[RMDB]
RNA sequence: GGGAACGACUCGAGUAGAGUCGAAAAUAGGCGAACGAGAGGCCCUCUCGUGUGCGGAGUUGUCACGCUGACACAAUUGUUAUGAUGUCCGAUUCCGGUAGCAUCGCGGCGAUGAUUUCAUAGGACAUCUUAUGAACCCAAGUGCUUCGGGGAAGCAAGUAAAUAUCGACUUCGGUCGAUAUUUACUAAAAGAAACAACAACAACAAC
Reactivity to DMS in 0.01 (KOAc 150mM, MgCl2 10mM, bicine 150mM(pH8.5), 24C), signal-to-noise 2, nucleotides 027 to 156: u000a090g030g020c000g010a060a050c020g020a070g090a100g000g000c040c030c020u000c020u000c010g030u000g000u010g030c030g020g010a120g020u040u000g020u000c040a080c100g010c070u020g000a160c030a040c060a080a130u000u010g000u010u000a080u010g020a040u010g020u000c020c000g020a250u000u000c040c040g010g020u000a070g030c010a040u000c030g000c110g020g040c100g030a080u010g010a090u000u000u010c050a120u010a060g000g000a090c060a040u000c000u010u000a050u000g010a060a110c040c010c080a120a170g000u010g010c010u000u000c020g030g010g050g030a090a050g010c030a130
Reactivity to 2A3 in 0.01 (KOAc 150mM, MgCl2 10mM, bicine 150mM(pH8.5), 24C), signal-to-noise 1, nucleotides 027 to 156: u110a020g090g010c020g040a040a050c040g010a060g010a040g150g110c030c040c000u020c010u000c040g040u080g010u100g000c030g010g040a090g050u080u080g030u040c070a020c120g000c010u070g090a040c000a000c030a090a120u100u090g060u090u060a070u090g100a020u010g000u000c010c010g060a060u120u000c030c070g090g000u050a020g020c030a050u030c020g000c030g060g030c070g040a010u030g030a020u060u170u160c020a050u110a030g020g000a010c000a010u010c000u040u020a120u070g040a030a030c000c000c040a080a020g040u040g080c000u020u070c040g030g000g020g010a010a000g010c020a000